An RNA of 207 nucleotides, treated with 2A3 and DMS and read out base by base. The DMS profile rests on 3,355 reads. Source: RMDB library OK3TST, as collected in RNAgym. High 2A3 reactivity points to a flexible backbone, as in loops and unpaired stretches. DMS adducts were read by reverse transcription with MarathonRT.
[RMDB]
RNA sequence: GGGAACGACUCGAGUAGAGUCGAAAAGGACCGACAACCUGAAUACCCCAGGGGACGGCGGUGCAAUCUGCAACUCAUGCGGUAACGACUCCGGGAUCGGUUGGUUGAUGAAAUUAACUGGUAUGCCGUAUAGCGAAUGCAUAAAUAUCUUGGGAAGAAGCGUUACAAAUUUCGAUUUGUAACGCUUAAAAGAAACAACAACAACAAC
Reactivity to 2A3 in 0.01 (KOAc 150mM, MgCl2 10mM, bicine 150mM(pH8.5), 24C), signal-to-noise 3, nucleotides 027 to 156: g050g030a040c010c030g030a050c060a070a050c000c020u050g020a070a050u210a240c020c010c020c020a020g010g000g000g020a020c020g020g020c020g000g000u040g000c020a020a090u030c070u080g020c010a040a130c050u030c140a050u070g010c000g000g030u030a080a020c060g080a050c030u020c060c030g020g020g040a060u040c010g020g000u030u040g010g010u010u040g030a090u120g010a000a010a030u040u050a050a000c000u000g020g030u060a040u080g020c000c000g050u110a060u060a060g040c040g060a100a040u060g010c030a010u090a130a140a010u160a080u050c050u050u060g000g000g020a070a030g060
Reactivity to DMS in 0.01 (KOAc 150mM, MgCl2 10mM, bicine 150mM(pH8.5), 24C), signal-to-noise 2, nucleotides 027 to 156: g020g000a120c040c010g030a120c050a110a120c000c020u000g010a110a110u020a150c000c040c010c010a060g000g020g000g000a170c070g010g030c060g060g000u030g040c040a050a080u000c060u000g020c010a100a070c030u000c110a100u000g030c000g030g010u010a080a160c040g000a140c040u000c090c080g010g010g010a020u000c020g000g010u000u000g020g020u000u000g000a220u000g000a160a030a080u000u010a020a010c030u000g000g020u000a220u000g050c020c030g010u000a030u000a100g010c010g000a070a080u000g000c040a080u000a020a070a140u000a090u000c060u010u000g000g050g000a150a150g010